[RMDB]
RNA sequence: GGGAACGACUCGAGUAGAGUCGAAAAGAUCCAGAGAUUUCCGAAUGGGGGAACCCACUAUCUUUAGUCGGAUAGUAUCCUUACGUGAAUACAUAGCGUGAGGAAGGCAGACCCAGGGAACUGAAACAUCUAAGUACCUGGAGGAAGAGAAAGAAAAGUAGGCAAUAAUGUUCGCAUUAUUGCCUACAAAAGAAACAACAACAACAAC
Reactivity to 2A3 in 0.01 (KOAc 150mM, MgCl2 10mM, bicine 150mM(pH8.5), 24C), signal-to-noise 3, nucleotides 027 to 156: g040a020u050c030c010a000g020a000g010a170u050u070u080c090c040g070a120a090u100g010g010g000g020g030a010a020c010c030c010a020c010u000a010u050c000u020u090u050a110g080u140c050g000g010a000u000a000g040u030a050u020c000c000u010u000a000c000g020u010g050a040a010u070a090c050a020u050a010g010c000g000u000g000a000g010g010a000a000g040g000c040a020g030a090c010c010c000a010g000g000g020a040a020c020u050g020a070a120a060c080a110u060c050u100a060a040g010u010a030c000c000u030g010g040a030g030g020a040a050g040a000g050a070a100a000g040a030a090a020a010
Reactivity to DMS in 0.01 (KOAc 150mM, MgCl2 10mM, bicine 150mM(pH8.5), 24C), signal-to-noise 2, nucleotides 027 to 156: g010a070u050c010c000a060g010a130g000a300u010u010u000c000c000g000a160a150u000g020g000g000g050g020a120a110c020c010c120a080c010u000a010u000c000u000u000u000a220g050u010c300g010g010a030u000a020g030u020a120u000c000c000u000u000a010c000g060u000g000a210a240u010a160c170a040u000a300g000c000g010u000g010a020g030g000a010a080g000g000c070a120g020a170c040c000c000a070g010g000g000a070a300c040u000g000a090a050a190c120a020u000c050u020a090a090g010u000a110c020c020u010g030g010a090g000g000a070a120g010a100g000a090a090a100g000a090a050a030a220
The record gives the reactivity of an RNA of 207 nucleotides to 2A3 and DMS. The DMS profile rests on 2,432 reads. The data come from the RNA Mapping Database (RMDB), library PDB130. For DMS the reverse transcriptase was MarathonRT. Conditions: 150 mM KOAc, 10 mM MgCl2 and 150 mM bicine (pH 8.5), 24 C. The 2A3 profile rests on 1,901 reads.